[RMDB]
RNA sequence: GGGAACGACUCGAGUAGAGUCGAAAAAGGAGUUGGGCUUCACUUAGGGAUUGUAGAGAUUAUCAACAUGACAAAGCGAUCAAGAUUGAUGAUGCUUACGGGCGACAUUUAUUUUUGAGGCGCUCAAGGGAAAAUUAUUCUUCGGAAUAAUUUUCCCAAAAGAAACAACAACAACAAC
Reactivity to 2A3 in 0.01 (KOAc 150mM, MgCl2 10mM, bicine 150mM(pH8.5), 24C), signal-to-noise 1, nucleotides 027 to 126: a000g010g000a030g030u150u060g000g030g050c070u130u110c000a010c030u000u110a000g000g010g030a050u030u060g060u120a010g000a000g020a190u000u020a170u030c020a010a080c050a100u120g020a030c120a020a070a090g070c050g010a010u000c080a000a000g010a060u030u010g000a000u000g010a000u040g050c030u060u120a190c270g050g000g000c000g030a000c080a000u040u040u130a000u000u100u020u000u130g000a000g100g030c020g030c000u080c170a000a030
Reactivity to DMS in 0.01 (KOAc 150mM, MgCl2 10mM, bicine 150mM(pH8.5), 24C), signal-to-noise 1, nucleotides 027 to 126: a140g040g010a130g000u010u050g040g020g020c000u020u000c090a040c070u020u020a070g010g030g040a120u020u050g000u010a060g000a050g010a120u050u030a090u030c040a160a030c090a000u000g000a120c120a080a060a060g030c080g010a170u000c020a030a040g010a010u000u000g020a020u000g010a040u040g000c050u000u010a030c280g020g050g040c000g010a060c030a000u020u000u040a000u000u010u000u000u000g040a050g000g000c040g000c030u000c150a140a090